[RMDB]
RNA sequence: GGGAACGACUCGAGUAGAGUCGAAAAGGACGAUACCGGCGCGGUCACGUCCGUCGAAAUCGUCGUUCGCGGCCGGCACGAGACCAUCGAGAUGGGUGACGCCCAGCCCGGCGAAGACACCGAGCACAAGAUCACCACCACCUGCAGCUACUACAAGCCUACGCUCACAAUUCGUUGUGAGCGUAGGAAAAGAAACAACAACAACAAC
Reactivity to 2A3 in 0.01 (KOAc 150mM, MgCl2 10mM, bicine 150mM(pH8.5), 24C), signal-to-noise 2, nucleotides 027 to 156: g040g020a050c010g000a010u030a060c060c000g000g060c090g000c110g040g100u120c060a040c080g020u020c050c030g020u000c020g070a120a060a110u170c010g020u000c010g000u050u040c060g010c070g070g040c010c030g000g000c040a030c120g100a130g090a050c010c000a020u060c050g040a040g000a130u040g030g040g010u050g010a000c100g130c010c000c000a020g030c000c030c050g030g000c060g040a030a020g040a000c030a030c040c120g010a020g060c020a040c060a200a030g020a170u030c060a000c060c000a000c000c030a020c040c000u040g000c020a040g000c010u060a050c010u010a040c090a180a000g000